Chemical mapping of a 177-nucleotide RNA with DMS. The RNA was probed in 150 mM KOAc, 10 mM MgCl2 and 150 mM bicine (pH 8.5) at 24 C. It was measured as part of the RMDB library TTRINS.
RNA sequence: GGGAACGACUCGAGUAGAGUCGAAAAGAUAUGGACUCACGCCCAAUCUAGGUUCUCGAUUCUAUGAUCAAUCGGAAACGAUUGCGUAUAGACAGGAUUGAACUAGAUUGGGCGUGAGUCCUAAGUCCAUAAUCAAAAUCUUCGGAUUUUGAUUAUGAAAAGAAACAACAACAACAAC
Reactivity to DMS in 0.01 (KOAc 150mM, MgCl2 10mM, bicine 150mM(pH8.5), 24C), signal-to-noise 3, nucleotides 027 to 126: g000a100u000a300u010g010g000a030c000u000c000a010c000g020c000c000c000a010a020u000c000u000a030g030g000u010u000c050u000c070g000a280u010u000c000u010a030u010g000a110u010c010a000a010u000c000g000g010a160a120a240c010g010a020u000u000g000c240g000u010a020u000a010g000a060c300a170g010g000a090u010u000g000a010a130c000u000a000g010a010u000u010g010g010g020c010g020u000g000a000g000u000c010c000u010a020a090g000u000c030